[RMDB]
RNA sequence: GGGAACGACUCGAGUAGAGUCGAAAAAAACCUGAUCGGACACCGACGGUGAAAGCCGUCGGGUAUGGUAACACUUCCUCGGCUAGGGACUAUGGGCAGCCAAGCUCUAAAAGCCUCCUUGGCUCAAGAGUGCAGUUCACAGACUAAAUGGCAGUGGGCUUAAAGAUAGCUUCGGCUAUCUUUAAGCAAAAGAAACAACAACAACAAC
Reactivity to 2A3 in 0.01 (KOAc 150mM, MgCl2 10mM, bicine 150mM(pH8.5), 24C), signal-to-noise 1, nucleotides 027 to 156: a000a000a000c060c000u120g050a160u070c060g050g000a030c030a030c140c010g000a010c000g030g010u030g100a140a030a020g050c000c000g020u010c050g000g000g000u010a010u020g130g000u060a050a050c030a020c100u060u080c010c010u010c060g020g000c060u090a010g010g020g020a010c010u020a050u130g060g000g060c010a010g020c010c040a040a060g010c000u000c030u120a130a130a000a000g000c010c070u090c010c080u070u150g000g010c030u000c070a020a010g050a000g030u040g040c080a000g030u010u020c000a010c010a100g050a060c060u150a100a000a080u050g010g000c030a030g040u140g030g090
This 207-nucleotide RNA was probed chemically with 2A3. 2A3 adducts were read by reverse transcription with SuperScript II with manganese. It was measured as part of the RMDB library RSTRND.